[RMDB]
RNA sequence: GGGAACGACUCGAGUAGAGUCGAAAAAACGCUGGGAGGACGAUGGUAGUUAUAGGGAGUCGUGGCCACUGAAGCGCGCACGGUGGAAUCGACAUCGAUCUAUAACGAGAGUAGUCCUCCUGUGCUGAAGCGCGCACGGCAACCGAAAGGUGCGAAACCAUGUUAAAAGGUUCGCCUUUUAACAUGGAAAAGAAACAACAACAACAAC
Reactivity to DMS in 0.01 (KOAc 150mM, MgCl2 10mM, bicine 150mM(pH8.5), 24C), signal-to-noise 2, nucleotides 027 to 156: a080a050c060g000c040u010g010g030g010a060g060g010a070c010g040a180u030g010g010u000a190g020u000u000a020u010a020g020g000g020a050g080u000c000g040u000g000g000c040c010a040c010u010g030a070a050g070c020g050c030g020c040a300c030g020g040u010g020g010a080a190u010c030g010a010c000a290u000c180g000a060u000c030u000a000u000a040a040c010g040a280g000a110g010u000a280g000u010c000c000u000c000c000u000g010u000g070c030u010g010a110a050g040c030g030c010g000c010a140c000g000g000c010a140a100c020c050g000a070a080a200g040g010u020g000c030g000a140a160a190
The record gives the reactivity of an RNA of 207 nucleotides to DMS. In probing experiments dimethyl sulfate is read out at A N1 and C N3, which are open when not base-paired. Values are in units of 0.01, from 0 to 300, in steps of 10. The RNA was probed in 150 mM KOAc, 10 mM MgCl2 and 150 mM bicine (pH 8.5) at 24 C.